RNA sequence: GGGAACGACUCGAGUAGAGUCGAAAAGGGAGAGCUCGACUGCAUUAAAUCCAGAGGAGGACCUGAACACUGCCUGCUCCACCCACUGGUGUUGGGUGAACUGGAGUGGAGGGACCAGCAGUGGAUGGUGGGAGUGAAGUUUCGACUUCACUCCCACAAAAGAAACAACAACAACAAC
Reactivity to DMS in 0.01 (KOAc 150mM, MgCl2 10mM, bicine 150mM(pH8.5), 24C), signal-to-noise 2, nucleotides 027 to 126: g010g010g000a060g000a050g020c010u000c040g010a080c060u000g040c060a070u010u010a050a140a120u010c090c030a100g000a160g040g010a190g010g000a140c040c010u000g000a080a240c020a020c030u000g000c010c010u000g010c180u000c040c010a020c000c010c010a000c050u000g040g020u000g030u000u010g010g030g000u000g000a020a050c080u000g000g010a060g010u000g020g010a240g000g010g010a100c070c000a070g000c050a110g020u010g010g010a030u000g010
Reactivity to 2A3 in 0.01 (KOAc 150mM, MgCl2 10mM, bicine 150mM(pH8.5), 24C), signal-to-noise 2, nucleotides 027 to 126: g000g040g000a080g000a020g020c040u050c090g110a050c030u020g000c030a040u020u190a150a090a060u030c000c020a040g010a020g090g050a000g000g020a030c000c000u020g140a240a000c000a010c030u190g180c000c010u060g040c020u020c020c010a010c030c000c000a000c070u090g140g040u190g120u240u090g040g040g000u110g040a050a000c030u050g030g060a000g070u070g000g020a070g020g000g040a030c070c000a010g000c030a010g000u030g000g040a050u060g110
Chemical mapping of a 177-nucleotide RNA with DMS and 2A3. For 2A3 the reverse transcriptase was SuperScript II with manganese. It was measured as part of the RMDB library OK2TST. Conditions: 150 mM KOAc, 10 mM MgCl2 and 150 mM bicine (pH 8.5), 24 C.